[RMDB]
Structure probing data (DMS) for a 177-nucleotide construct. High DMS reactivity at an A or C suggests that its Watson-Crick edge is free. For DMS, 714 sequencing reads were counted.
RNA sequence: GGGAACGACUCGAGUAGAGUCGAAAAGAUAUGGAAGCGUCAUUCGCGAGAGAAAAGAUACAGGGAACAUAUCGGAAACGAUAUGGGAACUGUAUCUUUUGGAAUGCGAGGGACGCUUCCUAAGUCAUCUCUCAGAUUACUUCGGUAAUCUGAGAGAAAAAGAAACAACAACAACAAC
Reactivity to DMS in 0.01 (KOAc 150mM, MgCl2 10mM, bicine 150mM(pH8.5), 24C), signal-to-noise 1, nucleotides 027 to 126: g000a030u000a300u020g000g000a030a000g010c000g030u000c000a080u000u000c010g090c030g000a090g020a300g000a030a000a030a000g010a010u000a000c000a000g000g010g010a300a300c000a000u000a000u000c000g000g000a100a110a140c000g000a000u000a000u000g000g000g000a300a140c000u000g000u020a000u000c000u000u000u010u000g020g000a300a120u000g010c000g000a040g040g020g070a000c000g000c030u000u000c000c000u000a000a120g000u030c000a120